[RMDB]
RNA sequence: GGGAACGACUCGAGUAGAGUCGAAAAACGCUGGGUACGGGAAUAGAGCUUGGAUUUAUAGGGUUGUAUACUGAAGCGCGCACGGUAUACACUCCCUAUUGUCAGCUCUUAGUACCGUACCUGUGCUGAAGCGCGCACGGCAACCGAAAGGUGCGAACUACUGUUUUGUGUUCGCACAAAACAGUAGAAAAGAAACAACAACAACAAC
Reactivity to DMS in 0.01 (KOAc 150mM, MgCl2 10mM, bicine 150mM(pH8.5), 24C), signal-to-noise 1, nucleotides 027 to 156: a110c070g020c030u000g020g020g030u000a010c020g000g010g000a250a300u000a010g000a010g020c020u000u020g050g010a160u000u000u000a060u000a040g020g000g020u000u010g030u000a020u000a010c000u020g000a030a120g020c010g060c050g000c000a300c040g000g030u000a000u000a020c000a020c120u000c000c000c000u010a040u000u000g000u000c110a110g010c000u000c000u000u000a020g030u000a210c020c020g020u000a000c010c000u010g000u010g070c020u000g000a100a120g020c020g060c010g050c030a180c080g000g000c050a060a200c020c000g020a060a200a120g000g000u000g000c010g000a090a170
Reactivity to 2A3 in 0.01 (KOAc 150mM, MgCl2 10mM, bicine 150mM(pH8.5), 24C), signal-to-noise 4, nucleotides 027 to 156: a010c050g000c020u050g000g000g000u000a000c010g000g030g010a020a010u030a020g000a010g010c050u120u180g200g040a150u220u300u180a140u180a020g000g000g000u000u010g000u000a010u000a000c000u010g070a190a070g030c020g000c000g000c040a010c040g000g010u000a010u000a000c020a010c110u160c000c000c000u020a040u040u170g060u040c010a010g000c010u000c000u000u000a000g000u000a000c000c000g000u010a000c000c000u000g010u020g000c010u040g030a070a020g020c020g000c000g000c020a010c020g070g000c060a140a140c020c010g060a100a020a010g030g000u030g020c010g030a080a020

Structure probing data (DMS and 2A3) for a 207-nucleotide construct. The RNA was probed in 150 mM KOAc, 10 mM MgCl2 and 150 mM bicine (pH 8.5) at 24 C. Values cover nucleotides 27 to 156. DMS adducts were read by reverse transcription with MarathonRT. The DMS profile rests on 3,046 reads. For 2A3 the reverse transcriptase was SuperScript II with manganese.